An RNA of 177 nucleotides, treated with DMS and read out base by base.
Reactivities are rounded to 0.1 and cut off at 0 and 3.
Conditions: 150 mM KOAc, 10 mM MgCl2 and 150 mM bicine (pH 8.5), 24 C.
For DMS, 1,554 sequencing reads were counted.

RNA sequence: GGGAACGACUCGAGUAGAGUCGAAAAGAUAUGGAAACUUCGAUAAGCCUUAUGUCGGAAACGACAUUGGGCUUUUGACGAAGGUUCCUAAGUCAAAGUAACUAUCGGCUUCGGCCGAUAGUUACAAGCAUACACUCGUGUUCGCACGAGUGUAUGCAAAAGAAACAACAACAACAAC
Reactivity to DMS in 0.01 (KOAc 150mM, MgCl2 10mM, bicine 150mM(pH8.5), 24C), signal-to-noise 1, nucleotides 027 to 126: g010a030u000a300u000g000g000a000a000a000c010u010u000c000g020a110u000a040a040g000c010c000u000u000a010u000g010u000c000g000g020a060a060a170c000g000a010c000a010u000u000g010g010g030c000u000u000u010u000g010a150c130g010a000a000g000g020u000u000c000c000u010a030a080g000u000c040a120a140a170g000u000a010a010c000u010a000u000c000g010g000c000u000u010c190g010g020c010c000g000a000u000a000g010u000u000a000c000a020a130